RNA sequence: GGGAACGACUCGAGUAGAGUCGAAAAGCGAUCAAUAAUAAGUCGACAACUCGAAAGAGUCUCAUGGAAACAUGCCUACUAAUGCGUCCAAUGUAGGUCGACGAUUAGGACGCAGAAGAUCGCGAAAAAUAGCAUCCGGAUUCGUCCGGAUGCUAUUAAAAGAAACAACAACAACAAC
Reactivity to DMS in 0.01 (KOAc 150mM, MgCl2 10mM, bicine 150mM(pH8.5), 24C), signal-to-noise 4, nucleotides 027 to 126: g000c000g020a010u000c000a130a120u020a110a060u010a100a150g000u000c040g030a030c150a140a040c010u000c000g010a120a070a120g010a010g010u000c100u000c010a000u000g040g000a190a060a120c000a020u000g000c300c010u010a030c020u000a100a100u000g010c010g000u000c000c010a090a070u010g010u020a020g010g000u000c010g020a000c010g000a120u000u010a190g000g000a020c010g000c030a070g000a090a120g020a010u000c000g020c000g010a040a070a050
Reactivity to 2A3 in 0.01 (KOAc 150mM, MgCl2 10mM, bicine 150mM(pH8.5), 24C), signal-to-noise 3, nucleotides 027 to 126: g010c000g010a000u030c030a000a010u120a250a000u020a030a110g050u010c000g010a010c020a000a000c010u010c000g080a140a070a090g000a000g000u030c050u010c040a020u000g010g020a030a010a030c000a010u020g000c000c000u040a030c000u010a050a110u080g000c000g020u000c000c020a020a100u220g010u040a060g090g000u000c020g000a010c020g000a000u000u080a010g000g010a000c000g000c000a000g000a040a000g000a000u000c000g000c010g050a030a000a000